[RMDB]
The data come from the RNA Mapping Database (RMDB), library M2RFPK. Structure probing data (2A3 and DMS) for a 207-nucleotide construct.
RNA sequence: GGGAACGACUCGAGUAGAGUCGAAAAAGUUCGCGCUUCCGUGAAACGCGAAAAUCGGACGGUGGCUGCAAGUAGCAUCGCAAAACCGCGGCAAGUGGAGUUAGCGAGAGGAGGCUGGGUUUUGGCUAGAACACACGGUACUUCGGUACCGUGUGAACUUUAAUUAUGCCUUCGGGCAUAAUUAAAGAAAAGAAACAACAACAACAAC
Reactivity to 2A3 in 0.01 (KOAc 150mM, MgCl2 10mM, bicine 150mM(pH8.5), 24C), signal-to-noise 3, nucleotides 027 to 156: a010g090u050u020c010g000c030g000c050u090u020c100c060g140u070g070a090a060a020c020g010c000g020a050a010a000a060u130c030g040g000a010c020g040g000u030g040g030c020u040g010c060a070a070g010u060a020g070c020a040u040c020g000c030a000a030a040a060c020c020g020c020g060g060c140a100a060g010u050g070g020a070g020u070u130a020g030c030g000a030g010a040g050g020a010g020g020c040u020g040g020g000u020u040u070u080g030g000c030u030a040g080a180a010c010a000c000a000c000g010g000u000a010c000u020u060c130g070g000u010a000c000c010g000u000g000u000g000a000a000
Reactivity to DMS in 0.01 (KOAc 150mM, MgCl2 10mM, bicine 150mM(pH8.5), 24C), signal-to-noise 3, nucleotides 027 to 156: a110g020u000u010c010g020c020g020c020u000u010c030c180g010u010g020a060a030a000c010g000c000g000a030a030a080a060u010c080g020g010a110c070g020g020u010g020g020c030u000g010c080a040a120g030u000a100g020c020a090u000c040g030c030a050a060a110a070c070c020g010c050g010g020c030a080a180g010u010g020g020a120g020u000u010a130g020c020g000a060g010a120g020g000a100g020g000c030u000g000g000g010u000u000u010u000g030g010c080u000a120g020a100a210c010a010c000a020c000g000g000u010a010c010u000u000c300g060g010u000a010c010c000g000u010g010u000g010a010a050